Record summary:
This 177-nucleotide RNA was probed chemically with DMS and 2A3. DMS adducts were read by reverse transcription with MarathonRT. For 2A3, 5,919 sequencing reads were counted. Values are in units of 0.01, from 0 to 300, in steps of 10. Reactivities are given for positions 27 through 126. The data come from the RNA Mapping Database (RMDB), library OK2TRN. Conditions: 150 mM KOAc, 10 mM MgCl2 and 150 mM bicine (pH 8.5), 24 C.

RNA sequence: GGGAACGACUCGAGUAGAGUCGAAAAUCUAUAGGGAUAAAUCCCUCCUCCAGCCUCCAUCAUAAGGUUCAUUGAUUAAUGCAUGCAAAGAGUGAACCAGGCCUACCACAGUGUGCAAAUCAGGGUACAUACUAAAUCGGUUCGCCGAUUUAGUAUGAAAAGAAACAACAACAACAAC
Reactivity to DMS in 0.01 (KOAc 150mM, MgCl2 10mM, bicine 150mM(pH8.5), 24C), signal-to-noise 6, nucleotides 027 to 126: u010c040u000a130u010a100g000g010g010a090u000a080a180a160u000c010c000c000u000c030c020u000c010c020a090g000c020c010u000c030c050a050u000c120a080u010a150a100g000g000u000u000c020a040u000u000g010a110u010u010a080a070u000g010c040a050u010g020c050a050a090a170g020a070g020u000g000a030a040c040c010a120g010g010c040c040u010a060c030c030a060c090a100g020u000g020u000g010c040a040a060a090u000c070a060g000g000g010u010a170
Reactivity to 2A3 in 0.01 (KOAc 150mM, MgCl2 10mM, bicine 150mM(pH8.5), 24C), signal-to-noise 4, nucleotides 027 to 126: u040c050u030a170u230a170g000g040g020a040u080a080a190a110u050c000c000c010u020c010c020u000c010c010a040g010c010c000u000c020c010a080u050c010a030u100a180a030g030g000u030u030c040a020u060u050g060a030u060u150a170a030u130g040c050a020u070g010c030a130a110a020g060a040g030u030g000a010a010c010c000a000g040g020c010c000u040a040c010c020a030c010a070g040u030g010u030g100c000a010a040a090u050c000a020g060g030g000u040a040